[RMDB]
RNA sequence: GGGAACGACUCGAGUAGAGUCGAAAAUGGGAGAUGGGAAUUUUUCUCGAAUCAGCCUAGAAACUACCUAUCACUCUAUGAUCAUGUAAGCCAUCAAGGCAUAACUGGGUUGAUGACCCCUUGUAUCCACUUGCAUGUGGUUCGCCACAUGCAAGUGAAAAGAAACAACAACAACAAC
Reactivity to 2A3 in 0.01 (KOAc 150mM, MgCl2 10mM, bicine 150mM(pH8.5), 24C), signal-to-noise 1, nucleotides 027 to 126: u080g000g040g000a070g010a060u090g010g040g050a080a040u080u020u020u160u000c010u020c030g040a030a040u000c000a030g030c000c010u000a000g010a030a060a000c050u060a040c030c000u010a000u000c030a040c030u080c060u050a110u250g050a050u050c030a010u070g070u100a010a110g000c000c020a110u160c130a220a160g060g010c000a030u070a100a040c030u000g030g000g030u000u020g000a060u060g030a000c020c010c000c000u000u120g020u060a120u020c030
Reactivity to DMS in 0.01 (KOAc 150mM, MgCl2 10mM, bicine 150mM(pH8.5), 24C), signal-to-noise 2, nucleotides 027 to 126: u020g010g000g000a120g010a080u020g010g000g000a100a050u000u000u000u000u000c020u030c000g020a130a070u000c040a030g000c020c000u010a010g000a190a120a070c300u000a070c030c060u000a020u000c080a080c240u010c150u020a130u010g000a050u030c100a060u000g000u010a040a150g000c060c010a110u000c160a110a100g010g000c020a030u000a060a270c020u000g000g020g000u000u010g000a010u010g010a240c060c020c000c070u010u000g030u000a130u000c050
Structure probing data (2A3 and DMS) for a 177-nucleotide construct. Reactivities are given for positions 27 through 126. Source: RMDB library OK2TRN, as collected in RNAgym. The DMS profile rests on 1,322 reads. The reactions ran in a buffer of 150 mM KOAc, 10 mM MgCl2 and 150 mM bicine (pH 8.5), at 24 C.